[RMDB]
RNA sequence: GGGAACGACUCGAGUAGAGUCGAAAAGAGUGAUGGCCAUGGCAUGGAAGAAGGUGAGACUUGCAUGAAUCGUGAAUCAAAACCUCCAUGAUUAUCACUGCAAGUCGUACCUUUUUCCUAGCCAUGAGUAUCCAGAUGACUUCGGUCAUCUGGAUACAAAAGAAACAACAACAACAAC
Reactivity to 2A3 in 0.01 (KOAc 150mM, MgCl2 10mM, bicine 150mM(pH8.5), 24C), signal-to-noise 1, nucleotides 027 to 126: g130a000g120u210g040a060u110g120g060c000c000a020u000g000g040c020a010u020g020g010a010a020g020a010a000g040g010u020g030a050g000a000c010u010u000g010c010a000u010g030a010a000u010c000g000u000g050a020a050u180c150a090a080a090a150c030c020u010c020c000a000u030g000a010u010u080a120u170c050a010c110u020g000c000a000a000g000u010c010g010u030a000c000c020u000u000u000u000u000c000c000u000a000g000c000c000a000u010g000a000
Reactivity to DMS in 0.01 (KOAc 150mM, MgCl2 10mM, bicine 150mM(pH8.5), 24C), signal-to-noise 2, nucleotides 027 to 126: g030a080g050u000g020a090u010g010g000c100c010a020u010g000g010c010a300u000g000g010a000a010g000a060a010g010g000u000g000a050g000a010c010u000u000g000c000a060u000g000a010a010u000c020g010u000g000a040a070u020c140a090a050a110a200c260c270u000c110c000a020u000g010a010u010u000a090u010c030a050c250u000g000c000a000a000g000u010c000g000u000a020c000c000u000u000u000u010u000c000c000u010a260g000c000c010a000u000g000a200